[RMDB]
RNA sequence: GGGAACGACUCGAGUAGAGUCGAAAAGAUAUGGAGAGGAAGCGGCAGCAACAGCCUCGUUCGGAAACGAACGAGGACAUGCUGGGCUUUCCUCUCCUAAGUCAAAAGUUCGUGUUCGCACGAACAACAGCCUAGACAAGUUCGCUUGUCUAGGCUGAAAAGAAACAACAACAACAAC
Reactivity to DMS in 0.01 (KOAc 150mM, MgCl2 10mM, bicine 150mM(pH8.5), 24C), signal-to-noise 2, nucleotides 027 to 126: g000a050u010a300u000g010g000a000g030a030g000g000a000a020g010c000g020g010c000a020g000c020a020a080c280a280g000c000c000u000c010g000u010u000c010g000g000a130a120a290c000g000a020a000c000g000a000g020g000a040c100a130u010g010c000u010g000g020g010c000u040u010u020c010c000u000c020u000c000c000u000a010a050g040u000c050a130a120a170a190g010u000u000c000g010u010g000u000u010c220g030c040a020c020g030a010a000c000a120a150
Reactivity to 2A3 in 0.01 (KOAc 150mM, MgCl2 10mM, bicine 150mM(pH8.5), 24C), signal-to-noise 1, nucleotides 027 to 126: g060a000u090a020u180g000g000a040g040a020g040g000a030a000g000c030g300g160c150a010g000c030a030a110c080a250g020c000c000u000c020g020u000u010c020g020g000a020a110a050c010g000a000a000c000g000a000g000g000a000c000a000u010g010c020u020g020g000g030c000u010u000u010c000c010u000c020u000c000c000u000a000a000g000u030c020a030a060a000a100g000u000u030c010g020u030g090u000u200c300g060c080a000c020g020a020a000c000a000a010

Overview:
The data come from the RNA Mapping Database (RMDB), library TTRDES. Structure probing data (DMS and 2A3) for a 177-nucleotide construct. The reactions ran in a buffer of 150 mM KOAc, 10 mM MgCl2 and 150 mM bicine (pH 8.5), at 24 C.